[RMDB]
RNA sequence: GGGAACGACUCGAGUAGAGUCGAAAAAGGUAACAACCCCCAUGUCAAGAGGACCGACCUGCAGCCAAGCCUUUGGUUAUACCAAGGGUGCUGUUCACAGACUAAAUGAUGACGGGUUGCUAAUCACAAAGCGUGAUUGCAGCUCAAGAUAUAGUCGCGCUUAACAUAACUUCGGUUAUGUUAAGCGAAAAGAAACAACAACAACAAC
Reactivity to 2A3 in 0.01 (KOAc 150mM, MgCl2 10mM, bicine 150mM(pH8.5), 24C), signal-to-noise 3, nucleotides 027 to 156: a000g170g040u150a200a050c080a040a090c060c000c000c000c020a050u130g060u090c110a100a080g050a090g080g060a050c050c030g020a050c020c040u030g020c000a000g040c010c040a120a060g010c010c010u030u000u000g030g000u200u100a100u140a140c000c010a000a010g000g000g050u070g010c010u010g000u040u070c050a040c010a120g020a010c030u020a010a100a120u100g050a050u050g060a070c110g030g000g000u000u000g030c090u200a000a000u020c020a010c060a080a250a090g220c180g010u000g000a000u000u000g000c000a000g000c010u000c010a020a030g010a000u090a000u020a020g020u000c030g000
Reactivity to DMS in 0.01 (KOAc 150mM, MgCl2 10mM, bicine 150mM(pH8.5), 24C), signal-to-noise 1, nucleotides 027 to 156: a070g000g000u010a040a010c070a160a190c020c010c000c060c010a150u010g020u000c100a060a110g000a070g010g030a080c020c020g000a080c020c000u000g000c010a090g010c080c160a090a280g010c000c010u030u010u000g010g030u000u000a130u000a300c000c000a000a020g020g050g050u000g040c030u010g000u000u000c060a050c020a110g030a080c010u010a010a080a110u020g020a160u020g010a220c170g010g010g010u000u000g020c000u000a010a010u000c000a020c000a210a150a130g000c250g030u000g010a030u000u010g010c010a010g000c000u000c000a050a020g010a090u000a100u010a000g050u000c030g000